[RMDB]
RNA sequence: GGGAACGACUCGAGUAGAGUCGAAAAAACCGGCAUCAUCGAAAACCGGCUCUUCAUGAUCGAGGGCCGGCAGCGGCUCGAGCAGCGGCAGGCCGGGGUGAUCACGUAGUAGUGCUGAAUGACCCGAUCACAGGUUGAGGUUCGCCUCAACCUGUGAAAAAGAAACAACAACAACAAC
Reactivity to 2A3 in 0.01 (KOAc 150mM, MgCl2 10mM, bicine 150mM(pH8.5), 24C), signal-to-noise 2, nucleotides 027 to 126: a000a000c030c000g000g000c020a120u110c000a050u200c160g110a100a050a000a040c010c000g030g000c010u000c040u160u030c010a110u150g130a080u180c070g020a010g000g000g000c000c000g000g000c000a000g030c010g120g000c000u000c010g290a130g030c060a000g050c000g090g000c040a090g010g000c000c000g010g000g000g000u080g050a080u130c060a000c080g080u110a050g040u030a020g110u090g130c070u010g130a050a080u070g080a200c010c010c010g010a000
Reactivity to DMS in 0.01 (KOAc 150mM, MgCl2 10mM, bicine 150mM(pH8.5), 24C), signal-to-noise 1, nucleotides 027 to 126: a100a050c020c000g000g010c010a080u030c030a090u020c130g000a210a130a090a180c020c000g030g000c020u000c000u030u000c090a130u020g010a100u000c130g000a000g000g000g000c010c020g030g010c080a060g010c000g000g000c090u000c070g000a140g020c120a060g010c000g010g000c000a150g010g000c020c000g000g000g000g000u020g000a040u000c000a060c070g000u000a030g040u030a120g000u000g000c060u000g000a080a050u020g000a170c000c030c020g000a070
The data come from the RNA Mapping Database (RMDB), library OK1LIB. Chemical mapping of a 177-nucleotide RNA with 2A3 and DMS. The 2A3 profile rests on 898 reads. Values cover nucleotides 27 to 126.